The data come from the RNA Mapping Database (RMDB), library OK2TST.
An RNA of 177 nucleotides, treated with 2A3 and DMS and read out base by base.
The DMS profile rests on 14,434 reads.
The RNA was probed in 150 mM KOAc, 10 mM MgCl2 and 150 mM bicine (pH 8.5) at 24 C.
2A3 adducts were read by reverse transcription with SuperScript II with manganese.
Reactivities are given for positions 27 through 126.

[RMDB]
RNA sequence: GGGAACGACUCGAGUAGAGUCGAAAAGGCGGUGCCGAUCGUCGACCCGAUACCCGCCAAAUCGGUCGCCACCGCCGCUAGCGCCUCCGGGAUCGUGACCACAAAUGACAUCUGGCACCUCGUCAACCAUUCUAUAUGACUUCGGUCAUAUAGAAUGAAAAGAAACAACAACAACAAC
Reactivity to 2A3 in 0.01 (KOAc 150mM, MgCl2 10mM, bicine 150mM(pH8.5), 24C), signal-to-noise 8, nucleotides 027 to 126: g010g000c000g000g020u020g010c030c010g010a010u010c020g070u020c050g050a110c010c010c010g010a060u130a170c020c020c020g050c040c020a030a040a040u070c010g000g000u000c010g000c020c000a010c000c010g000c020c000g000c030u030a030g060c010g020c010c000u000c010c010g060g020g020a210u030c020g010u020g030a040c020c010a020c030a030a120a040u160g030a020c010a050u030c050u030g010g010c010a030c050c020u050c030g040u030c010a020a030c030
Reactivity to DMS in 0.01 (KOAc 150mM, MgCl2 10mM, bicine 150mM(pH8.5), 24C), signal-to-noise 9, nucleotides 027 to 126: g010g010c010g010g020u000g010c300c010g010a020u000c020g020u000c110g010a110c050c040c010g010a110u010a100c060c020c040g020c060c060a030a090a070u010c020g000g000u000c010g010c290c010a020c010c020g010c020c010g000c090u000a090g000c050g000c050c010u000c020c020g010g010g000a050u000c030g000u000g000a220c030c020a110c200a050a070a070u000g000a050c050a050u000c040u000g010g010c040a050c020c020u000c050g010u000c070a090a090c170